[RMDB]
Structure probing data (DMS and 2A3) for a 207-nucleotide construct.
The DMS profile rests on 2,800 reads.
The reactions ran in a buffer of 150 mM KOAc, 10 mM MgCl2 and 150 mM bicine (pH 8.5), at 24 C.
Reactivities are given for positions 27 through 156.

RNA sequence: GGGAACGACUCGAGUAGAGUCGAAAAUCGUUCUGCUUUACGAUUAACAGCUAAUUUAGAACUGUGACGAUCACCGGGAAUCCAACUGUUUAAUUAAAACAAAGCAUUGCGAUAAGCUUAAAAGCUUUUGACGCAAUGUGAUUUCUGCCCAGUGCUCCCUAUUAGCACACUUCGGUGUGCUAAUAGGAAAAGAAACAACAACAACAAC
Reactivity to DMS in 0.01 (KOAc 150mM, MgCl2 10mM, bicine 150mM(pH8.5), 24C), signal-to-noise 2, nucleotides 027 to 156: u000c010g020u000u020c010u000g010c070u000u000u000a070c110g040a110u000u000a090a070c030a040g000c010u000a090a100u000u010u010a110g010a030a110c020u000g010u000g040a110c090g040a110u000c000a050c040c020g030g040g000a050a050u000c040c120a070a100c030u000g000u000u000u000a050a100u010u000a030a050a020a030c040a040a130a300g000c000a010u010u000g040c010g020a130u000a030a000g010c000u000u000a070a080a130a240g000c000u000u000u000u000g020a260c030g050c000a000a020u010g030u010g020a050u000u000u010c010u000g000c030c020c010a090g010u000g010c040u000c030
Reactivity to 2A3 in 0.01 (KOAc 150mM, MgCl2 10mM, bicine 150mM(pH8.5), 24C), signal-to-noise 5, nucleotides 027 to 156: u030c010g010u030u030c030u060g120c080u090u080u080a060c040g060a080u090u100a100a060c030a060g070c050u120a140a140u140u100u150a080g020a080a050c020u020g020u050g070a020c020g030a030u060c030a020c020c030g000g010g030a010a050u030c060c020a070a030c060u020g060u050u050u080a150a160u080u170a040a080a020a020c040a020a030a010g020c000a000u000u000g000c000g060a060u010a060a000g000c010u090u180a100a150a030a020g000c000u020u050u020u100g130a050c020g000c000a000a000u000g000u010g000a000u000u060u010c030u040g030c000c010c010a030g010u040g060c020u060c010